RNA sequence: GGGAACGACUCGAGUAGAGUCGAAAAGCGUGUCGAGCUUGUCGGCAAGCGCCACGGCAACGGAAACCGGGUUCUUCGGCACCACGUCGGACGGGCCCUGCGGCUUGUAAUGCUCUUCCAGAGCGGAGCUACGGUACGGAUUCGUCCGUACCGUAGCAAAAGAAACAACAACAACAAC
Reactivity to 2A3 in 0.01 (KOAc 150mM, MgCl2 10mM, bicine 150mM(pH8.5), 24C), signal-to-noise 3, nucleotides 027 to 126: g000c030g000u020g000u030c010g000a020g040c170u190u110g130u100c010g020g080c040a060a020g040c040g050c020c010a050c030g060g000c010a080a070c080g080g040a120a000a020c040c040g050g020g000u020u020c040u060u020c010g000g000c000a060c120c060a090c150g040u000c000g000g040a070c060g010g010g000c010c000c000u060g010c020g060g020c000u060u070g080u100a110a080u210g000c000u000c020u120u060c040c080a050g000a010g050c050g030g040a080
Reactivity to DMS in 0.01 (KOAc 150mM, MgCl2 10mM, bicine 150mM(pH8.5), 24C), signal-to-noise 3, nucleotides 027 to 126: g010c010g040u000g030u000c020g010a080g020c110u010u000g020u030c090g000g000c030a060a080g010c040g010c020c040a080c080g000g010c060a050a070c080g000g010a050a120a100c060c050g000g000g010u010u000c070u000u000c030g010g000c020a100c140c150a100c150g010u000c010g010g000a040c110g000g010g000c010c020c040u000g000c040g010g010c030u000u010g000u040a070a110u000g000c000u000c030u000u010c140c100a170g010a070g010c030g020g000a160